RNA sequence: GGGAACGACUCGAGUAGAGUCGAAAAAUUAGCCUUGUGUGGGGGCGCACACCUGUAGUCUCAGCCACUAGGGAGGCUGAGGCAGGAGAAUCACUUGAACCCAGGAGGCGGAGGUUGCAGCGAGCCAAGAUUGUGCCAUUGCACUUCAGCUUGGGUAUGACUAUCCUAGGUUCGCCUAGGAUAGUCAAAAAGAAACAACAACAACAAC
Reactivity to 2A3 in 0.01 (KOAc 150mM, MgCl2 10mM, bicine 150mM(pH8.5), 24C), signal-to-noise 2, nucleotides 027 to 156: a000u130u130a050g050c000c000u060u080g020u000g000u050g010g040g000g020g070c070g000c060a010c000a050c030c040u080g110u240a130g040u140c050u000c010a000g030c010c010a050c010u120a120g000g090g050a070g030g000c000u000g000a000g000g010c000a020g010g000a050g050a020a040u070c050a000c070u070u080g080a030a030c030c000c000a010g070g070a140g020g220c060g030g020a000g000g010u130u130g000c010a000g000c090g160a020g010c080c000a120a000g210a300u030u300g060u120g010c000c020a030u060u070g020c010a000c000u000u010c030a000g010c000u080u020g000g030g050u090a060